RNA sequence: GGGAACGACUCGAGUAGAGUCGAAAACGGCGGCGAGGUGCGCGAGUUCAAACACCUGGUGUACUUCCACCACAGCGCUAUCGUGCGCUACCUGAACCUCAUCUUUCUGUGCCCUACCUCUCCGUCAUGGUUCAUCAGCGUUUUUGGGCACACCGAAAUAACCGGGGAAGUUCGCUUCCCCGGUUAUAAAAGAAACAACAACAACAAC
Reactivity to 2A3 in 0.01 (KOAc 150mM, MgCl2 10mM, bicine 150mM(pH8.5), 24C), signal-to-noise 1, nucleotides 027 to 156: c010g000g020c010g040g030c000g010a000g000g020u050g030c040g110c090g000a090g040u000u010c040a130a140a070c050a040c090c000u000g010g010u000g010u050a160c090u230u000c050c030a040c020c000a050c060a040g020c000g010c040u120a170u300c160g100u240g040c000g000c000u040a090c000c070u050g000a020a040c000c010u040c050a130u060c130u050u140u070c110u120g010u000g000c010c010c010u010a000c000c000u050c000u000c000c000g000u020c020a060u110g030g050u000u120c020a130u040c020a050g040c050g010u020u000u050u090u150g020g030g050c010a000c010a000c030c070g050a280a030